[RMDB]
RNA sequence: GGGAACGACUCGAGUAGAGUCGAAAAGCGCGUGAAGGGACGUUGUCGAUUAUGGUUGGCGGUGAUGAAGCGGUAUUUGAACGUGUUAAACCGCUGUUUGAACUGCUCGGUAAAAAUAUCACCCUCGUCAAGUUGUGAACUUCGGUUCACAACUUGAAAAAGAAACAACAACAACAAC
Reactivity to 2A3 in 0.01 (KOAc 150mM, MgCl2 10mM, bicine 150mM(pH8.5), 24C), signal-to-noise 1, nucleotides 027 to 126: g070c070g020c030g000u040g000a120a000g020g010g030a040c030g020u020u050g060u090c040g020a080u040u090a060u220g210g000u100u120g050g000c060g000g000u000g010a070u050g030a030a000g040c020g000g000u090a150u000u020u120g040a100a050c040g070u080g140u150u200a050a100a020c010c010g000c000u010g090u010u000u040g020a020a010c020u000g000c030u030c000g000g020u140a060a120a040a040a000u130a010u030c010a030c000c000c000u000c030g100
Reactivity to DMS in 0.01 (KOAc 150mM, MgCl2 10mM, bicine 150mM(pH8.5), 24C), signal-to-noise 3, nucleotides 027 to 126: g030c040g000c030g020u000g020a120a080g010g010g020a120c070g020u010u000g000u000c050g010a080u010u000a070u010g020g010u000u000g010g020c050g010g010u010g000a150u000g010a090a030g010c000g010g020u000a090u000u000u000g020a040a090c150g000u000g010u010u000a050a120a070c090c010g000c000u000g030u000u010u010g000a190a050c040u000g010c010u000c060g020g030u000a030a060a030a080a070u010a060u000c050a120c030c010c030u000c150g010
An RNA of 177 nucleotides, treated with 2A3 and DMS and read out base by base. The reactions ran in a buffer of 150 mM KOAc, 10 mM MgCl2 and 150 mM bicine (pH 8.5), at 24 C. It was measured as part of the RMDB library OK2TRN. For 2A3, 840 sequencing reads were counted. DMS adducts were read by reverse transcription with MarathonRT.